Structure probing data (2A3) for a 177-nucleotide construct. The reactions ran in a buffer of 150 mM KOAc, 10 mM MgCl2 and 150 mM bicine (pH 8.5), at 24 C. The 2A3 profile rests on 359 reads.
[RMDB]
RNA sequence: GGGAACGACUCGAGUAGAGUCGAAAAACUAGAACUAGAAUGGCAGCUGCCUGGGAGAAAACAUCCCUUUGAGCACAAUGCAACUCAAUUUUCAAAUUUUUGGUCAUACCAAUUAAGAAAGAGGUUGAGUCGUACACGGAUUCGUCCGUGUACGACUAAAAGAAACAACAACAACAAC
Reactivity to 2A3 in 0.01 (KOAc 150mM, MgCl2 10mM, bicine 150mM(pH8.5), 24C), signal-to-noise 1, nucleotides 027 to 126: a000c080u090a150g130a030a000c130u100a110g190a060a130u140g270g000c110a200g000c040u060g000c000c000u000g000g000g030a010g060a000a030a010a000c000a090u060c000c000c000u000u090u070g090a140g050c060a010c030a030a110u090g000c000a110a000c000u010c020a050a070u000u000u100u080c060a070a130a210u030u000u040u090u090g010g050u070c030a000u230a300c000c000a010a110u110u110a090a020g180a050a060a010g180a000g050g010u080u080g000